[RMDB]
RNA sequence: GGGAACGACUCGAGUAGAGUCGAAAAUCGUGCUUUCAGCUUCUUUACAGUGCUGCCUUGUAGCAUUCAGGUCAAGCAGCAUUGUACAGGGCUAUGAAAGAACCAAAAACGGAGGGUUCGCCCUCCGCCCUACUUAUAGCUUCGGCUAUAAGUAGGGAAAAGAAACAACAACAACAAC
Reactivity to DMS in 0.01 (KOAc 150mM, MgCl2 10mM, bicine 150mM(pH8.5), 24C), signal-to-noise 4, nucleotides 027 to 126: u020c140g030u010g020c000u000u010u010c000a030g020c010u000u020c000u000u000u000a010c010a020g030u000g010c000u000g010c160c060u000u000g010u000a100g020c130a170u010u010c240a130g020g010u000c020a040a050g000c000a010g010c000a010u000u010g000u010a010c070a030g010g000g000c010u010a060u000g020a010a010a010g000a090a170c050c140a040a050a070a090a240c040g020g010a000g000g000g000u000u000c240g000c000c000c000u000c000c000g010
Reactivity to 2A3 in 0.01 (KOAc 150mM, MgCl2 10mM, bicine 150mM(pH8.5), 24C), signal-to-noise 6, nucleotides 027 to 126: u090c020g030u080g040c010u000u010u010c000a000g010c000u300u110c000u020u180u010a000c000a010g010u000g010c000u000g000c020c050u040u030g060u110a090g120c080a160u110u280c120a100g150g080u050c000a020a000g000c000a000g000c000a000u000u000g000u000a000c000a000g000g010g010c010u020a050u090g010a000a000a000g030a020a030c030c010a030a030a060a020a030c010g010g010a010g030g010g010u060u110c190g090c020c000c000u010c000c000g000